[RMDB]
RNA sequence: GGGAACGACUCGAGUAGAGUCGAAAAGCAUAUGUGCGGAAGCAUAUGUGCGACCAUAUGCGAAAGCGUGUGGGAGGUAAGUACGUCGAAUCGUGGGACGUACCGUAGCACGAGUAGGGGCAAACGCCGCUAAGCGUGCGACGAAGGGGCACGGACGACUUACAUAUAUCUUCGGGUAUAUGUGAGUAAAAGAAACAACAACAACAAC
Reactivity to DMS in 0.01 (KOAc 150mM, MgCl2 10mM, bicine 150mM(pH8.5), 24C), signal-to-noise 3, nucleotides 027 to 156: g020c010a020u010a000u000g030u010g020c000g040g040a210a300g000c000a020u000a000u000g030u000g020c010g010a080c020c020a030u000a030u000g020c010g010a130a090a170g010c030g060u000g000u000g010g000g000a140g010g000u000a050a090g010u000a010c010g010u000c010g000a100a170u010c100g000u000g020g010g000a040c000g000u000a010c010c010g000u010a040g000c010a030c010g010a040g010u000a040g010g010g020g020c020a090a110a190c270g000c000c000g000c000u000a010a020g010c010g020u010g010c000g010a010c010g010a120a140g010g010g010g010c040a060c070g020g010a140c080g000
Reactivity to 2A3 in 0.01 (KOAc 150mM, MgCl2 10mM, bicine 150mM(pH8.5), 24C), signal-to-noise 4, nucleotides 027 to 156: g000c000a020u020a010u030g040u020g010c050g180g080a120a040g000c000a000u020a010u020g010u010g040c010g000a010c000c010a030u050a010u060g030c010g060a130a030a020g010c010g000u020g010u040g010g050g020a070g050g050u150a070a040g010u000a000c000g000u000c020g050a100a080u060c020g000u020g010g000g000a000c010g000u000a000c000c000g010u010a010g010c000a000c000g000a010g020u010a000g030g050g000g000c020a200a210a100c220g000c010c010g060c260u000a010a000g020c000g000u000g000c000g010a000c000g010a020a020g030g010g000g010c030a000c020g010g030a010c040g000

Structure probing data (DMS and 2A3) for a 207-nucleotide construct.
Values cover nucleotides 27 to 156.
The reactions ran in a buffer of 150 mM KOAc, 10 mM MgCl2 and 150 mM bicine (pH 8.5), at 24 C.
For DMS the reverse transcriptase was MarathonRT.
The 2A3 profile rests on 5,055 reads.